[RMDB]
RNA sequence: GGGAACGACUCGAGUAGAGUCGAAAACGUCGAGCCAGCGCCGCACCGUGCGCGUGGCCACCUUCCGCUGCGCUGCGAACGCGUCGAUCGAGAUCAUGGACGUGGCCGGGCGCUUGGCCGGCUCGGGGAAGGGAUAGGCAUUCGUGCCUAUCCCUUCAAAAGAAACAACAACAACAAC
Reactivity to 2A3 in 0.01 (KOAc 150mM, MgCl2 10mM, bicine 150mM(pH8.5), 24C), signal-to-noise 3, nucleotides 027 to 126: c020g100u030c000g000a020g010c030c030a060g010c060g000c090c020g090c050a140c040c090g030u060g010c000g000c110g160u010g020g030c000c010a030c000c040u120u090c020c010g060c060u030g000c020g010c010u120g020c040g060a110a000c080g020c020g070u060c070g040a120u110c030g070a050g020a240u140c040a090u160g020g000a020c020g020u000g000g050c050c010g000g100g000c050g000c050u100u140g000g000c000c000g000g000c010u020c010g000g030g020
Reactivity to DMS in 0.01 (KOAc 150mM, MgCl2 10mM, bicine 150mM(pH8.5), 24C), signal-to-noise 4, nucleotides 027 to 126: c080g000u000c000g010a080g010c010c000a090g030c130g030c020c030g010c180a210c130c110g030u000g030c010g050c000g020u000g000g000c000c040a020c020c090u010u010c020c020g000c150u010g010c030g000c020u000g020c170g020a120a130c140g000c000g010u010c060g000a080u000c110g010a200g000a110u030c080a120u000g010g010a050c300g010u000g010g010c020c010g000g000g000c030g000c030u010u000g010g030c040c010g010g000c000u000c020g010g010g010

Conditions: 150 mM KOAc, 10 mM MgCl2 and 150 mM bicine (pH 8.5), 24 C. An RNA of 177 nucleotides, treated with 2A3 and DMS and read out base by base. Source: RMDB library OK2TRN, as collected in RNAgym. 2A3 adducts were read by reverse transcription with SuperScript II with manganese. The DMS profile rests on 2,453 reads. For DMS the reverse transcriptase was MarathonRT. High DMS reactivity at an A or C suggests that its Watson-Crick edge is free.